[RMDB]
RNA sequence: GGGAACGACUCGAGUAGAGUCGAAAACGCAUAAGAGCUUCUGUGCACAGGACGUUGCCGCGGUAACAGGCGCAACCGUAAUCUGAUCUUACCCAGCAAUAGUGGACACGCGGCUAAGUGAGUAAACACGCCAUAGGACGUUCGCGUCCUAUGGCGUAAAAGAAACAACAACAACAAC
Reactivity to DMS in 0.01 (KOAc 150mM, MgCl2 10mM, bicine 150mM(pH8.5), 24C), signal-to-noise 2, nucleotides 027 to 126: c170g040c050a210u000a050a060g000a060g000c040u000u000c050u000g000u000g000c060a090c070a060g020g000a040c110g020u000u000g020c020c050g050c070g000g030u000a140a110c150a160g000g000c130g000c040a030a070c060c140g000u000a110a090u000c030u030g050a120u000c110u000u000a050c000c000c000a140g040c020a050a090u010a030g030u010g000g000a050c090a050c110g000c090g010g010c010u010a090a090g020u010g000a090g020u030a080a050a100c260
Source information: This 177-nucleotide RNA was probed chemically with DMS. The reactions ran in a buffer of 150 mM KOAc, 10 mM MgCl2 and 150 mM bicine (pH 8.5), at 24 C. It was measured as part of the RMDB library OK2TRN. Values cover nucleotides 27 to 126.